Chemical mapping of a 177-nucleotide RNA with DMS. DMS adducts were read by reverse transcription with MarathonRT. Reactivities are given for positions 27 through 126. The DMS profile rests on 1,207 reads.

RNA sequence: GGGAACGACUCGAGUAGAGUCGAAAAGAUAUGGAAUAUCUGGAGUCCAUGCGUCGGAAACGACGCAUCGGACCUUGAAGGAGUAUUCCUAAGUCAAAAUCGGUACCUCCUUCGGGAGGUACCGAAACACCCAGGUAAAGUUCGCUUUACCUGGGUGAAAAGAAACAACAACAACAAC
Reactivity to DMS in 0.01 (KOAc 150mM, MgCl2 10mM, bicine 150mM(pH8.5), 24C), signal-to-noise 1, nucleotides 027 to 126: g000a010u010a020u020g000g000a000a020u000a030u000c010u000g000g010a010g000u000c000c010a020u000g000c010g040u000c000g000g020a010a000a020c000g020a010c010g000c000a000u000c060g060g010a000c000c300u010u000g000a110a200g000g000a030g030u000a030u000u000c000c000u000a020a100g000u000c000a070a040a100a090u000c010g020g000u000a020c000c010u000c000c000u000u000c160g010g020g010a030g000g000u020a000c000c000g000a000a030a150